RNA sequence: GGGAACGACUCGAGUAGAGUCGAAAACUGCGUGGUAGAGGUGUUGAAGACUGACUCGGUUUACAGUUUCUUACGCAUACACUACUUGUAGACUAGACCGUGUUAGUCUUUAGACAUAAGUGGUGAAGGAACACGUAGAAUUCGUUCUGUGUGUUCCAAAAGAAACAACAACAACAAC
Reactivity to DMS in 0.01 (KOAc 150mM, MgCl2 10mM, bicine 150mM(pH8.5), 24C), signal-to-noise 8, nucleotides 027 to 126: c050u000g000c080g010u000g000g020u010a050g010a080g010g000u000g000u000u000g000a030a040g000a010c000u000g010a010c010u010c000g000g000u000u000u010a060c230a080g010u000u010u010c080u020u030a040c130g000c140a080u020a080c170a080c220u020a050c100u020u000g010u010a050g010a090c100u010a050g000a010c000c010g000u000g000u000u010a020g000u000c000u000u000u010a020g020a040c040a030u010a060a090g020u000g010g010u010g010a140a120
Reactivity to 2A3 in 0.01 (KOAc 150mM, MgCl2 10mM, bicine 150mM(pH8.5), 24C), signal-to-noise 9, nucleotides 027 to 126: c020u040g020c030g080u100g030g060u110a050g020a060g050g080u020g000u020u050g010a020a010g000a000c000u000g000a000c000u000c020g020g000u010u020u060a070c060a020g000u030u070u020c050u080u080a080c090g050c060a070u160a130c140a040c080u250a050c040u090u140g040u100a010g010a020c010u010a020g010a000c000c000g010u010g000u020u010a000g000u000c000u000u000u000a010g000a000c000a010u070a090a070g040u060g100g040u070g060a100a090
Structure probing data (DMS and 2A3) for a 177-nucleotide construct. The reactions ran in a buffer of 150 mM KOAc, 10 mM MgCl2 and 150 mM bicine (pH 8.5), at 24 C. DMS adducts were read by reverse transcription with MarathonRT. The data come from the RNA Mapping Database (RMDB), library OK1LIB.